[RMDB]
Record summary
Structure probing data (DMS and 2A3) for a 177-nucleotide construct. The 2A3 profile rests on 6,961 reads. It was measured as part of the RMDB library OK1LIB. For 2A3 the reverse transcriptase was SuperScript II with manganese. Conditions: 150 mM KOAc, 10 mM MgCl2 and 150 mM bicine (pH 8.5), 24 C.
RNA sequence: GGGAACGACUCGAGUAGAGUCGAAAAGGGCACCACAGCUGAAAAUAAGCGAGGAUCGGUUGGCGGUGACGGGCGAACGUGGUUACUGCAUGGUCCGAGCCACACACUGUAACGUUAUAUAUAGAUACCCAUCACUACUAUUCGUAGUAGUGAUGGGAAAAGAAACAACAACAACAAC
Reactivity to DMS in 0.01 (KOAc 150mM, MgCl2 10mM, bicine 150mM(pH8.5), 24C), signal-to-noise 4, nucleotides 027 to 126: g010g000g000c060a030c020c030a070c080a100g000c030u020g020a100a080a070a090u040a100a070g000c010g000a150g000g010a080u020c000g010g020u010u040g000g010c050g000g000u000g000a070c100g010g000g020c050g000a050a040c150g000u010g000g000u000u000a070c090u000g020c020a110u020g000g000u000c050c030g000a240g010c000c010a060c160a080c120a030c080u000g010u020a040a090c090g000u020u010a020u020a080u010a100u030a100g010a140u010a120
Reactivity to 2A3 in 0.01 (KOAc 150mM, MgCl2 10mM, bicine 150mM(pH8.5), 24C), signal-to-noise 7, nucleotides 027 to 126: g010g020g010c040a030c030c020a020c040a040g040c030u060g120a040a110a070a150u260a140a050g040c040g010a040g010g040a060u030c040g060g130u050u100g140g010c040g000g020u030g000a050c010g030g080g020c070g050a140a060c100g080u100g020g050u100u080a060c020u060g030c020a080u120g030g000u000c000c010g000a000g000c020c000a010c000a000c000a010c040u050g030u160a100a000c040g000u110u010a080u010a030u020a010u040a220g090a090u120a070